Background: Conditions: 150 mM KOAc, 10 mM MgCl2 and 150 mM bicine (pH 8.5), 24 C. Chemical mapping of a 177-nucleotide RNA with 2A3 and DMS. For 2A3 the reverse transcriptase was SuperScript II with manganese.
[RMDB]
RNA sequence: GGGAACGACUCGAGUAGAGUCGAAAAGUUGCCUAAUCAUGCUCCCAAGAAAAACUUCUAAGCUUCAGGUAUAAGGUACCUGUACCGUAAACCGACACAGGUAGUCGAGGAGAGUAUCCUCAGGCGCAGCUAUGACCUGAUUCGUCAGGUCAUAGCUAAAAGAAACAACAACAACAAC
Reactivity to 2A3 in 0.01 (KOAc 150mM, MgCl2 10mM, bicine 150mM(pH8.5), 24C), signal-to-noise 7, nucleotides 027 to 126: g070u060u070g060c000c010u070a080a070u080c020a030u070g010c010u020c000c010c020a020a030g120a030a130a030a040a030c060u140u080c060u110a080a060g050c020u050u040c040a000g020g040u040a110u030a140a050g090g010u000a040c000c020u020g030u050a050c020c020g100u160a040a060a070c060c010g180a050c030a000c010a110g040g030u110a030g040u060c040g010a010g030g000a050g010a020g040u120a070u030c000c010u020c010a020g000g000c030g010c030
Reactivity to DMS in 0.01 (KOAc 150mM, MgCl2 10mM, bicine 150mM(pH8.5), 24C), signal-to-noise 4, nucleotides 027 to 126: g010u010u010g020c000c010u000a070a080u010c100a070u000g010c040u010c000c010c010a130a140g010a070a070a100a080a050c050u000u010c030u010a090a110g030c050u010u010c040a040g000g020u000a040u030a080a090g010g020u000a010c010c040u000g020u010a060c010c020g010u020a030a090a080c130c020g010a100c090a050c080a040g010g000u000a030g010u000c020g000a020g000g010a030g000a140g000u040a080u010c020c000u000c010a060g010g000c020g000c150
It was measured as part of the RMDB libraries RFM100 and RFMREP.